[RMDB]
RNA sequence: GGGAACGACUCGAGUAGAGUCGAAAAUUUUGUGACUGGCUCGUCUCACUUAGCAUGAUGUUUUCAAUUCAUGUUGUAGUAUGUGUCACUACUUCAUUUCUUUUUAUUGCCAAAUAAUAUUCACUUGUAUGAAUAUACUACAUUCUAUUUAUCCAUACAUGGACUAAAUGUUCGCAUUUAGUCCAUGAAAAGAAACAACAACAACAAC
Reactivity to 2A3 in 0.01 (KOAc 150mM, MgCl2 10mM, bicine 150mM(pH8.5), 24C), signal-to-noise 6, nucleotides 027 to 156: u090u090u080u140g030u020g020a040c040u040g040g040c010u020c070g030u040c040u020c050a040c020u030u040a010g000c010a020u020g020a030u040g140u130u130u140u230c170a160a090u030u010c010a010u010g000u030u040g030u030a020g000u010a060u130g090u010g060u020c010a000c040u060a030c010u050u070c040a140u070u110u120c030u060u140u050u050u080a100u140u090g030c000c010a040a080a070u140a080a020u030a070u050u060c020a010c080u090u110g050u120a080u050g030a030a000u060a010u010a060c030u020a020c020a060u060u060c020u080a130u090u190u080a110u050c030c010a030u030a170
Reactivity to DMS in 0.01 (KOAc 150mM, MgCl2 10mM, bicine 150mM(pH8.5), 24C), signal-to-noise 3, nucleotides 027 to 156: u000u000u000u020g020u010g000a060c010u010g030g030c010u000c040g010u000c040u000c060a070c050u000u010a070g020c030a030u000g030a040u010g010u000u020u000u000c190a090a120u000u000c030a050u010g010u010u000g010u000a050g030u010a060u000g020u010g010u000c040a070c020u000a070c060u000u000c050a120u000u000u000c020u000u000u000u010u000a090u060u000g000c030c050a060a120a100u010a080a070u000a090u000u000c020a060c060u000u020g010u000a070u010g000a060a030u010a040u000a070c070u000a040c040a090u000u000c050u000a110u020u000u010a110u020c020c020a070u010a200
The record gives the reactivity of an RNA of 207 nucleotides to 2A3 and DMS. The DMS profile rests on 7,506 reads. For 2A3, 3,508 sequencing reads were counted. The reactions ran in a buffer of 150 mM KOAc, 10 mM MgCl2 and 150 mM bicine (pH 8.5), at 24 C. DMS (dimethyl sulfate) methylates the pairing face of unpaired adenines and cytosines. The data come from the RNA Mapping Database (RMDB), library OK3TST. 2A3 adducts were read by reverse transcription with SuperScript II with manganese.